[RMDB]
Conditions: 150 mM KOAc, 10 mM MgCl2 and 150 mM bicine (pH 8.5), 24 C. This 177-nucleotide RNA was probed chemically with 2A3 and DMS. DMS adducts were read by reverse transcription with MarathonRT. The 2A3 profile rests on 2,287 reads. The DMS profile rests on 4,192 reads.

RNA sequence: GGGAACGACUCGAGUAGAGUCGAAAAAUACGCUUGCGUGACCAGGGGCUGUAGAAUGUUCAGAAAUAGACAUGGAAAGAGAUAAUUAGUGGCACCUCCGCUUAAAUGUUCACGCGUGGAGGAGAAAGCAUCAUGGAUAGUUCGCUAUCCAUGAUGCAAAAGAAACAACAACAACAAC
Reactivity to 2A3 in 0.01 (KOAc 150mM, MgCl2 10mM, bicine 150mM(pH8.5), 24C), signal-to-noise 4, nucleotides 027 to 126: a000u120a000c040g080c090u060u100g020c000g040u040g070a060c040c000a030g010g020g000g030c050u020g000u050a040g010a150a050u080g040u100u150c060a010g070a120a120a080u230a080g060a000c000a080u030g110g010a070a040a030g100a040g010a010u050a140a080u160u090a040g060u080g020g000c010a020c000c010u000c010c000g010c020u040u120a020a150a080u290g020u140u150c070a060c060g060c020g040u020g000g020a000g020g010a100g090a040a020a000
Reactivity to DMS in 0.01 (KOAc 150mM, MgCl2 10mM, bicine 150mM(pH8.5), 24C), signal-to-noise 3, nucleotides 027 to 126: a060u030a060c110g030c020u000u010g000c060g010u000g000a110c030c030a070g000g000g000g000c000u010g030u040a020g010a080a050u010g000u050u030c040a040g010a060a040a120u010a030g010a090c040a030u010g000g030a100a040a060g000a050g010a060u020a080a080u020u040a040g020u000g010g000c090a140c020c040u040c010c020g030c000u000u010a030a100a050u050g000u030u030c090a050c070g010c200g030u010g000g000a000g020g000a050g000a090a030a110